[RMDB]
RNA sequence: GGGAACGACUCGAGUAGAGUCGAAAAACCCAAGUCAGCAUGGAAGAGAUUCAGAAUGAGUCGGCCUGUGGCCUAGAUGUGGGAGAAUGUGAAAACAGAGCGAGAGAGAUGCCAGGGGUAUGGGGCGGCACAGCAUGGAAUUCGUUCCAUGCUGUGCAAAAGAAACAACAACAACAAC
Reactivity to 2A3 in 0.01 (KOAc 150mM, MgCl2 10mM, bicine 150mM(pH8.5), 24C), signal-to-noise 2, nucleotides 027 to 126: a000c010c000c000a000a020g160u070c020a000g020c030a040u070g010g000a050a000g070a000g020a050u070u020c060a080g110a190a100u160g040a000g050u000c050g040g020c010c040u150g000u070g030g030c020c000u080a160g040a150u150g060u070g020g020g000a070g050a040a040u120g070u010g050a020a000a090a000c000a000g080a020g040c080g000a020g000a000g030a000g040a060u060g020c080c040a010g050g010g000g000u050a050u130g010g000g030g030c020g070
Reactivity to DMS in 0.01 (KOAc 150mM, MgCl2 10mM, bicine 150mM(pH8.5), 24C), signal-to-noise 1, nucleotides 027 to 126: a130c010c000c000a160a090g000u000c070a030g020c070a040u000g000g010a070a130g050a110g010a050u000u000c020a120g010a130a010u000g000a030g010u000c090g000g020c010c020u030g020u050g010g010c030c000u010a030g020a160u010g020u050g050g070g000a040g000a080a040u010g040u040g000a030a060a050a010c130a000g000a080g000c050g030a040g000a050g000a060g000a040u000g000c070c160a080g000g000g000g050u010a000u000g020g020g000g010c150g010